The data come from the RNA Mapping Database (RMDB), libraries RFM100 and RFMREP.
Chemical mapping of a 177-nucleotide RNA with DMS and 2A3.
For 2A3 the reverse transcriptase was SuperScript II with manganese.
For DMS the reverse transcriptase was MarathonRT.
RNA sequence: GGGAACGACUCGAGUAGAGUCGAAAACAUUGCAUUAUGAGAAAUCAAAAGCUUUGGGUUCCGGGGGGAGUAUGGUCGCAAGUCUGAAACUUAAAGGAAUUGACGGAAGGGCACUACCAGGAGUGGAACAUUAUCCAAAUUUCGAUUUGGAUAAUGUAAAAGAAACAACAACAACAAC
Reactivity to DMS in 0.01 (KOAc 150mM, MgCl2 10mM, bicine 150mM(pH8.5), 24C), signal-to-noise 9, nucleotides 027 to 126: c040a030u010u010g010c020a050u020u010a110u000g000a030g010a100a090a120u000c010a030a050a120a110g000c010u010u000u000g000g010g020u000u010c030c040g000g000g000g000g000g000a060g010u010a040u010g010g010u010c050g030c070a060a070g010u010c030u010g010a080a060a120c100u010u020a060a100a120g000g000a040a100u010u010g010a080c060g010g010a070a100g010g000g000c040a050c050u010a060c060c040a060g000g000a090g020u010g010g010a100
Reactivity to 2A3 in 0.01 (KOAc 150mM, MgCl2 10mM, bicine 150mM(pH8.5), 24C), signal-to-noise 9, nucleotides 027 to 126: c020a030u050u080g020c020a050u090u120a100u230g050a050g050a060a070a060u060c030a020a030a050a040g010c000u060u040u050g040g000g000u060u010c020c000g010g020g000g000g010g000a030g030u080a050u110g060g010u050c020g000c060a040a010g020u000c040u050g060a100a060a070c050u080u100a120a060a020g070g010a050a060u080u060g010a030c020g010g010a020a020g040g000g000c010a020c030u050a060c010c020a020g040g030a060g040u070g010g020a030